[RMDB]
An RNA of 177 nucleotides, treated with 2A3 and DMS and read out base by base.
The DMS profile rests on 14,952 reads.
RNA sequence: GGGAACGACUCGAGUAGAGUCGAAAAGUUUUUGCGCAGCCUUCUUCUUUCAUUGACUCCCGGUCUGCGUUCCAGAGUGAAUUAUCUCUGGAAACCUGUGACGUCACUUACGGUGGACGUGAAAGAGGUAUUAAAUGGUCUUCGGACCAUUUAAUACAAAAGAAACAACAACAACAAC
Reactivity to 2A3 in 0.01 (KOAc 150mM, MgCl2 10mM, bicine 150mM(pH8.5), 24C), signal-to-noise 9, nucleotides 027 to 126: g030u050u040u050u160u200g040c060g010c040a030g030c030c010u030u060c020u050u010c020u020u100u020c050a130u040u230g050a070c030u040c000c000c000g020g020u040c020u040g040c060g020u010u000c000c000a000g000a010g010u060g100a160a160u300u130a140u200c000u000c000u010g000g000a010a030a010c030c020u100g040u100g080a020c010g040u060c030a040c100u090u210a060c090g140g080u080g070g030a020c000g010u010g020a010a040a010g090a020g010
Reactivity to DMS in 0.01 (KOAc 150mM, MgCl2 10mM, bicine 150mM(pH8.5), 24C), signal-to-noise 5, nucleotides 027 to 126: g000u000u000u000u010u010g010c040g010c070a090g000c060c020u010u020c030u010u000c000u000u000u000c030a080u030u010g010a100c080u000c050c010c010g010g010u010c010u010g020c120g000u000u000c000c000a000g000a010g010u010g010a160a140u050u040a060u010c000u000c000u000g000g000a010a020a030c060c050u020g000u020g010a040c030g000u010c030a040c120u010u050a150c140g000g020u000g010g010a060c040g000u000g000a030a060a060g010a090g020

For 2A3, 9,230 sequencing reads were counted. DMS adducts were read by reverse transcription with MarathonRT. It was measured as part of the RMDB library OK1LIB. 2A3 adducts were read by reverse transcription with SuperScript II with manganese. The RNA was probed in 150 mM KOAc, 10 mM MgCl2 and 150 mM bicine (pH 8.5) at 24 C.